[RMDB]
RNA sequence: GGGAACGACUCGAGUAGAGUCGAAAAUUAAAGACAGCCGCAAAUCGCUAAAACCCACCAUACUGGAGGAAGGAGAAGGGAGAGUCAUCCUCAGCGGACCAGCAGCAAUAACAGCUGCAAGCAAAAAGAUAAGAAGCAAGUUCGCUUGCUUCUUAUCAAAAGAAACAACAACAACAAC
Reactivity to 2A3 in 0.01 (KOAc 150mM, MgCl2 10mM, bicine 150mM(pH8.5), 24C), signal-to-noise 2, nucleotides 027 to 126: u020u000a030a000a020g060a050c030a010g020c010c030g040c090a050a060a110u120c030g010c010u010a050a010a040a120c020c000c020a020c030c020a070u090a260c030u090g030g020a020g010g020a070a070g050g040a050g010a080a040g000g030g000a070g000a010g070u030c020a020u020c000c000u040c020a000g020c050g060g020a050c000c010a030g010c000a010g000c010a000a180u070a200a060c020a070g000c010u020g000c020a010a010g070c020a060a100a070a030a010
Reactivity to DMS in 0.01 (KOAc 150mM, MgCl2 10mM, bicine 150mM(pH8.5), 24C), signal-to-noise 2, nucleotides 027 to 126: u000u010a050a040a130g000a080c050a060g000c080c060g040c060a020a090a060u000c120g050c010u000a070a040a080a110c050c010c020a140c110c050a140u010a090c150u000g020g020a080g010g010a090a060g010g010a070g000a030a060g000g010g000a070g000a060g000u000c100a040u000c030c000u000c080a030g000c050g000g000a110c120c060a110g000c010a010g020c010a090a090u000a030a060c210a150g010c010u000g000c030a090a070g000c170a060a050a070a100a070
Source: RMDB library M2PK90, as collected in RNAgym. This 177-nucleotide RNA was probed chemically with 2A3 and DMS. High 2A3 reactivity points to a flexible backbone, as in loops and unpaired stretches. Conditions: 150 mM KOAc, 10 mM MgCl2 and 150 mM bicine (pH 8.5), 24 C. The DMS profile rests on 1,426 reads. Values cover nucleotides 27 to 126.